[RMDB]
RNA sequence: GGGAACGACUCGAGUAGAGUCGAAAAAUUGCAUGCCGUAAGUGUAAUUUAGCUUUCCGGUUAACCACCUCAAAGCUACGCGCUAAUGAUAAUAUCUUAUCAGUUAGAUUCACUGCUAACAAAAUUGCUUAAGUAACUGGUUCGCCAGUUACUUAAGAAAAGAAACAACAACAACAAC
Reactivity to 2A3 in 0.01 (KOAc 150mM, MgCl2 10mM, bicine 150mM(pH8.5), 24C), signal-to-noise 5, nucleotides 027 to 126: a000u070u060g020c010a020u050g020c040c060g090u090a070a040g010u000g020u060a060a090u030u040u040a020g000c010u000u020u010c040c000g000g030u030u030a040a040c010c020a010c030c000u020c050a050a000a010g000c000u010a020c040g060c010g000c060u050a050a040u040g030a010u020a050a060u080a090u140c090u070u020a020u020c010a040g040u040u030a010g000a080u090u090c050a040c080u090g020c020u050a090a020c040a040a060a060a130u130u160g020
Reactivity to DMS in 0.01 (KOAc 150mM, MgCl2 10mM, bicine 150mM(pH8.5), 24C), signal-to-noise 5, nucleotides 027 to 126: a040u000u000g010c030a050u000g010c090c130g020u010a080a090g030u000g000u010a020a050u000u010u000a040g000c030u000u010u010c050c060g000g000u000u000a090a090c300c220a170c020c010u000c140a020a030a030g020c020u000a020c170g020c150g020c080u000a020a040u000g000a010u000a000a040u010a150u010c180u000u000a010u010c010a070g010u010u000a020g000a100u000u010c130a070c140u000g000c070u010a040a070c070a050a050a110a100u010u010g010

Conditions: 150 mM KOAc, 10 mM MgCl2 and 150 mM bicine (pH 8.5), 24 C. Chemical mapping of a 177-nucleotide RNA with 2A3 and DMS. The data come from the RNA Mapping Database (RMDB), library 15KREP. For DMS, 3,818 sequencing reads were counted. DMS adducts were read by reverse transcription with MarathonRT. Reactivities are given for positions 27 through 126.